Annotation
This 207-nucleotide RNA was probed chemically with 2A3 and DMS.

[RMDB]
RNA sequence: GGGAACGACUCGAGUAGAGUCGAAAAAGCCACCGCUACGGCGGUGGCAAGUAGAAAAGUUGGUGCUUAGACCCCGCCCUCUACCGUAAUAAUAGAUAAAUAGGCGAGUAUCAGUACGCUGAUACAAAAAACACUCACACGUUCGCGUGUGAGUGAACGUUAUAUACGUGUUCGCACGUAUAUAACGAAAAGAAACAACAACAACAAC
Reactivity to 2A3 in 0.01 (KOAc 150mM, MgCl2 10mM, bicine 150mM(pH8.5), 24C), signal-to-noise 4, nucleotides 027 to 156: a000g000c000c000a000c000c020g040c020u050a080c260g140g010c000g000g000u000g000g020c000a000a000g000u040a000g020a050a050a040a030g060u120u130g050g010u130g030c050u120u080a060g050a130c020c000c010c000g000c010c010c000u010c010u020a020c020c010g060u020a000a070u100a140a070u090a180g120a040u120a080a150a070u100a080g030g020c040g010a020g010u000a000u010c000a000g010u020a010c200g010c080u000g000a000u000a010c010a010a160a000a010a010a000c000a000c000u000c000a000c000a000c000g030u090u080c240g000c000g100u000g010u000g000a000g000u000g010a020a000
Reactivity to DMS in 0.01 (KOAc 150mM, MgCl2 10mM, bicine 150mM(pH8.5), 24C), signal-to-noise 2, nucleotides 027 to 156: a090g020c000c000a000c010c020g060c030u000a080c300g110g070c000g020g040u000g000g040c000a010a020g030u000a070g010a130a070a100a120g020u000u010g020g020u000g010c030u000u000a130g000a110c030c020c000c010g000c010c000c020u000c050u000a020c000c020g010u000a070a140u000a090a160u000a140g030a110u010a040a070a040u000a040g000g000c000g000a180g020u000a000u000c020a040g020u000a150c250g070c040u020g000a040u000a070c050a010a030a050a100a090a110c010a020c020u000c000a040c000a010c000g020u000u000c300g050c010g050u000g000u000g020a000g010u000g020a020a060
The 2A3 profile rests on 2,368 reads. DMS adducts were read by reverse transcription with MarathonRT.